[RMDB]
RNA sequence: GGGAACGACUCGAGUAGAGUCGAAAAGUGAAAAUUAUUUGUUGUUGGCAAGAUUACGGCGAAGCUGAAUCAAAUUUAAAAUGUUUCAGCUUCACUUUAUUUUGCCAAUAAAGGUAGCGGGCAAUGGGAAUGUAUGUUUGUUCGCAAACAUACAUUCAAAAGAAACAACAACAACAAC
Reactivity to 2A3 in 0.01 (KOAc 150mM, MgCl2 10mM, bicine 150mM(pH8.5), 24C), signal-to-noise 3, nucleotides 027 to 126: g090u050g070a030a000a100a150u200u110a160u120u170u150g100u040u030g000u000u010g000g010c000a000a000g000a010u040u060a020c060g000g010c060g020a000a000g000c000u000g000a000a010u010c030a050a050a140u130u300u300a140a160a050a070u070g000u000u000u000c000a000g000c000u000u000c000a000c000u000u000u000a010u000u010u010u000g000c000c000a000a000u010a000a000a000g060g000u010a020g010c100g000g010g020c010a070a170u130g110g070
Reactivity to DMS in 0.01 (KOAc 150mM, MgCl2 10mM, bicine 150mM(pH8.5), 24C), signal-to-noise 3, nucleotides 027 to 126: g020u010g010a070a070a100a130u010u000a040u000u000u000g000u000u000g010u000u000g000g000c000a020a000g000a010u000u010a030c140g000g000c030g010a010a010g020c000u000g000a000a000u000c010a010a060a150u000u010u010a100a070a150a140u000g000u000u000u000c000a000g000c000u000u000c000a000c000u000u000u010a020u000u000u000u000g010c000c000a000a000u000a010a030a070g000g010u000a050g010c160g010g000g000c100a050a070u010g010g000

An RNA of 177 nucleotides, treated with 2A3 and DMS and read out base by base. It was measured as part of the RMDB library RFMREP. The 2A3 profile rests on 2,549 reads. The reactions ran in a buffer of 150 mM KOAc, 10 mM MgCl2 and 150 mM bicine (pH 8.5), at 24 C.